[RMDB]
RNA sequence: GGGAACGACUCGAGUAGAGUCGAAAAUAGUCCAUCUCGAUAGCAUUCACGUAGCACACGAUUCGUCCAUUUCAAGUGGUUGUGGCACACCAUCCUGACUCCCCUGUCCCACAGCUCCUGGUGACCACUAACCUGCUUUCUGCUGUGGCUUUGCCUAAACCGGUCAUAUUUUCGAAUAUGACCGGUUAAAAGAAACAACAACAACAAC
Reactivity to 2A3 in 0.01 (KOAc 150mM, MgCl2 10mM, bicine 150mM(pH8.5), 24C), signal-to-noise 2, nucleotides 027 to 156: u150a010g050u010c010c010a020u000c080u070c110g060a070u050a050g030c020a050u090u120c040a030c040g030u040a000g040c080a020c000a010c100g070a190u140u020c050g060u020c040c030a110u000u110u090c120a120a060g040u020g030g010u010u030g030u060g040g000c050a010c020a020c140c030a040u040c010c020u130g050a180c040u060c010c000c000c030u010g010u020c000c000c000a030c010a010g010c000u010c050c020u050g000g050u010g010a020c010c000a030c040u060a060a020c000c020u030g050c030u040u070u020c020u020g040c010u030g000u030g090g000c010u100u050u030g030c010c040u100a270
Reactivity to DMS in 0.01 (KOAc 150mM, MgCl2 10mM, bicine 150mM(pH8.5), 24C), signal-to-noise 2, nucleotides 027 to 156: u000a140g020u000c020c030a130u000c030u000c010g040a120u010a110g000c030a120u000u000c040a130c040g010u010a080g020c070a080c060a080c090g020a170u000u010c050g000u010c020c020a100u000u000u000c140a090a090g010u000g000g030u000u010g000u010g020g010c030a090c030a050c000c010a070u000c030c030u020g010a080c050u020c000c010c010c020u000g030u020c050c040c000a070c080a080g000c010u010c050c040u000g030g000u000g010a080c030c030a060c060u000a050a100c050c010u000g010c060u000u000u000c050u000g000c000u020g020u000g030g000c010u000u000u000g010c030c040u020a100